The data come from the RNA Mapping Database (RMDB), libraries RFM100 and RFMREP.
The record gives the reactivity of an RNA of 177 nucleotides to DMS and 2A3.
DMS adducts were read by reverse transcription with MarathonRT.
[RMDB]
RNA sequence: GGGAACGACUCGAGUAGAGUCGAAAAGGGACACUGCUGUGCUGGGCCACCGGUGUGGGUGCAGGCGGGAAGGAAUGUGCCUAGCGGGUGUGGCGAGGAGUGUAGCCAGCUGUGGGUUUUUCUUGGGAUUAGAUAAUAUAUUCGUAUAUUAUCUAAUAAAAGAAACAACAACAACAAC
Reactivity to DMS in 0.01 (KOAc 150mM, MgCl2 10mM, bicine 150mM(pH8.5), 24C), signal-to-noise 3, nucleotides 027 to 126: g010g020g010a110c030a040c030u010g010c010u010g000u030g020c010u000g020g010g020c060c000a020c020c030g000g010u000g000u030g000g000g020u010g000c040a020g010g030c070g010g010g020a120a110g000g010a070a040u010g020u000g010c020c000u010a300g010c010g000g020g020u030g020u010g010g010c050g010a090g000g010a080g010u020g000u010a070g000c020c010a050g000c030u000g010u000g010g010g020u000u000u010u010u000c010u010u000g010g020g020
Reactivity to 2A3 in 0.01 (KOAc 150mM, MgCl2 10mM, bicine 150mM(pH8.5), 24C), signal-to-noise 9, nucleotides 027 to 126: g060g010g010a020c010a010c030u050g000c010u050g070u140g090c010u060g020g180g010c010c000a020c020c030g110g010u120g050u180g060g010g000u030g000c020a020g060g070c100g110g060g050a030a040g070g040a110a050u030g010u020g020c000c000u020a030g020c040g030g110g010u220g010u030g030g010c040g030a080g100g050a090g080u180g050u100a020g020c010c010a010g000c020u040g010u030g020g050g010u040u030u010u030u010c000u030u050g050g020g010
About this RNA
2A3 adducts were read by reverse transcription with SuperScript II with manganese. Values cover nucleotides 27 to 126. The reactions ran in a buffer of 150 mM KOAc, 10 mM MgCl2 and 150 mM bicine (pH 8.5), at 24 C.